An RNA of 207 nucleotides, treated with 2A3 and read out base by base. The RNA was probed in 150 mM KOAc, 10 mM MgCl2 and 150 mM bicine (pH 8.5) at 24 C. It was measured as part of the RMDB library OK3TST.

RNA sequence: GGGAACGACUCGAGUAGAGUCGAAAAGUGUGAAGUGAGUGAGCCACUUACGAGCACGAAUUACAUGGCUCUAUUGACAUUACUGGGCGCCAGGAGCCCUACCUGGACAAGUCUCGAAGAUCGGGCCGAGAUUGAGAGACGACUAUUAACGGCCACAAGCCUAGUCAUGGUUCGCCAUGACUAGGCUAAAAGAAACAACAACAACAAC
Reactivity to 2A3 in 0.01 (KOAc 150mM, MgCl2 10mM, bicine 150mM(pH8.5), 24C), signal-to-noise 1, nucleotides 027 to 156: g010u010g000u030g080a040a040g000u000g000a020g000u000g080a070g020c050c020a000c000u000u000a010c000g000a010g010c000a000c090g040a040a020u140u140a050c080a160u080g000g000c020u000c010u010a030u080u080g050a050c120a100u080u130a110c040u050g050g000g000c080g010c010c000a000g040g010a070g000c000c000c060u110a070c020c000u050g000g010a100c020a110a040g000u030c000u030c030g030a080a000g000a060u010c030g070g000g030c000c110g030a030g000a020u130u150g000a000g000a010g000a000c060g010a000c030u050a040u300u120a150a000c000g000g000c000c000a040c040a030